RNA sequence: GGGAACGACUCGAGUAGAGUCGAAAAUUCUAGACACACUCAUUCCACUGUAUUCAGGACUCUCCUCCACUGUGCUUUACCUAACCUUCCUCGCUGUAGCGCUGAUCCUGGCUCUAAGAAAGAAACGCUUUGGUAUACUGAAAUAUCUUUCCUGCGAGUUUAUAUUCUGGUUCGCCAGAAUAUAAACAAAAGAAACAACAACAACAAC
Reactivity to DMS in 0.01 (KOAc 150mM, MgCl2 10mM, bicine 150mM(pH8.5), 24C), signal-to-noise 3, nucleotides 027 to 156: u010u000c020u000a090g020a110c030a090c030a070c050u010c070a110u000u000c050c040a110c080u010g000u000a120u010u000c050a130g010g010a090c040u000c030u000c020c010u020c010c030a090c060u010g040u000g030c020u000u000u010a070c050c030u000a100a100c050c020u000u000c000c020u000c050g020c030u000g030u000a070g010c050g010c030u000g000a080u010c020c020u000g010g000c010u000c030u010a050a150g010a080a060a110g000a090a070a090c070g020c030u000u010u000g020g020u000a060u000a270c050u000g010a090a100a080u000a060u000c020u010u000u000c000c020u000g020c070g030a140
Reactivity to 2A3 in 0.01 (KOAc 150mM, MgCl2 10mM, bicine 150mM(pH8.5), 24C), signal-to-noise 4, nucleotides 027 to 156: u050u010c010u050a020g080a020c020a010c000a010c050u080c040a040u100u060c030c000a050c050u070g060u160a110u070u120c040a040g040g030a100c030u010c020u030c070c010u010c010c020a040c020u020g000u030g020c020u070u070u120a090c010c010u040a060a110c010c010u020u040c010c010u030c010g020c050u040g010u090a020g030c030g000c060u030g010a030u020c000c010u020g050g020c010u000c010u030a060a040g030a090a080a010g060a080a100a000c060g010c020u040u050u040g050g000u050a050u010a090c060u040g010a070a030a030u070a030u030c010u030u070u020c010c000u040g080c020g030a020
The data come from the RNA Mapping Database (RMDB), library OK3TST. An RNA of 207 nucleotides, treated with DMS and 2A3 and read out base by base. For DMS, 5,913 sequencing reads were counted. For DMS the reverse transcriptase was MarathonRT. High DMS reactivity at an A or C suggests that its Watson-Crick edge is free. The reactions ran in a buffer of 150 mM KOAc, 10 mM MgCl2 and 150 mM bicine (pH 8.5), at 24 C.